[RMDB]
Chemical mapping of a 207-nucleotide RNA with 2A3 and DMS. The 2A3 profile rests on 825 reads. Reactivities are rounded to 0.1 and cut off at 0 and 3. The RNA was probed in 150 mM KOAc, 10 mM MgCl2 and 150 mM bicine (pH 8.5) at 24 C.

RNA sequence: GGGAACGACUCGAGUAGAGUCGAAAAACGAAAACUACUCACUCGCAGCUUAAUAACCUGCGCUGAGCCCUUCUCCCCCAGCUUGCCUGUGUCCUAGGGAAUUGGAAGGUCAUCCUUCACAGGAUCGUCUAGGUAAUCCCUUUCGAGGGAUUACCAAUAACCAUAAUUCGUUCGCGAAUUAUGGUUAAAAAGAAACAACAACAACAAC
Reactivity to 2A3 in 0.01 (KOAc 150mM, MgCl2 10mM, bicine 150mM(pH8.5), 24C), signal-to-noise 1, nucleotides 027 to 156: a010c030g050a020a010a010a070c060u100a000c020u000c000a000c030u100c050g010c020a010g000c000u060u000a060a000u010a080a000c000c000u010g010c000g030c080u070g000a040g030c030c030c000u080u000c080u140c010c020c000c010c000a010g020c070u050u120g010c010c010u030g010u010g020u100c000c050u070a060g040g030g050a050a060u090u080g020g020a080a090g060g030u120c030a080u090c030c000u030u070c040a000c010a040g010g000a030u030c070g070u050c070u040a070g000g000u000a010a010u000c000c000c000u000u010u080c070g040a040g000g000g000a000u000u000a000c000c000a000a000
Reactivity to DMS in 0.01 (KOAc 150mM, MgCl2 10mM, bicine 150mM(pH8.5), 24C), signal-to-noise 2, nucleotides 027 to 156: a150c060g010a050a030a060a140c020u000a040c000u000c010a050c100u010c030g050c020a040g030c000u000u060a190a120u010a120a090c290c010u000g010c010g030c300u000g020a040g010c050c050c050u000u000c060u010c020c030c010c030c020a090g000c100u000u000g000c030c020u000g030u000g020u000c040c030u000a070g000g020g020a100a120u000u010g000g060a100a080g000g020u010c070a090u000c010c030u000u000c110a100c070a030g010g010a060u000c040g010u000c040u000a110g000g000u000a000a040u010c000c000c010u010u000u000c230g010a020g020g010g000a000u000u000a000c010c000a020a050